[RMDB]
RNA sequence: GGGAACGACUCGAGUAGAGUCGAAAAAGAAUCGAGGCAUCGGUACGGACGUCAAAAACUGCAAUUAUAAGAGUACACGCACAGAUUGUGGUUCUUGGCAGGCACAGACUUUCACUGCGUGUGACAGUAUGGAUCCACGAUUCGUCGUGGAUCCAUAAAAAGAAACAACAACAACAAC
Reactivity to DMS in 0.01 (KOAc 150mM, MgCl2 10mM, bicine 150mM(pH8.5), 24C), signal-to-noise 2, nucleotides 027 to 126: a090g040a130a050u040c060g030a070g010g030c060a040u000c060g000g030u000a070c070g020g010a100c130g000u000c070a030a000a000a020a000c080u020g050c030a010a050u000u010a030u000a130a050g000a110g010u000a000c080a040c080g020c040a080c120a140g020a040u060u010g000u000g020g030u000u000c090u050u000g000g040c010a130g050g000c080a140c140a090g020a020c060u050u000u000c060a130c180u020g060c040g010u000g000u000g000a050c080a130g000
Reactivity to 2A3 in 0.01 (KOAc 150mM, MgCl2 10mM, bicine 150mM(pH8.5), 24C), signal-to-noise 3, nucleotides 027 to 126: a000g080a040a040u020c010g010a020g060g030c080a020u100c030g010g030u040a040c040g010g000a000c020g020u080c080a000a060a000a090a020c010u000g030c030a030a080u080u130a110u130a300a090g070a000g070u120a030c030a010c090g000c010a020c020a120g060a030u060u060g000u010g020g020u040u040c020u010u080g030g000c000a020g070g060c020a030c000a090g110a020c000u120u130u040c030a070c040u080g080c050g120u150g000u020g070a030c010a010g060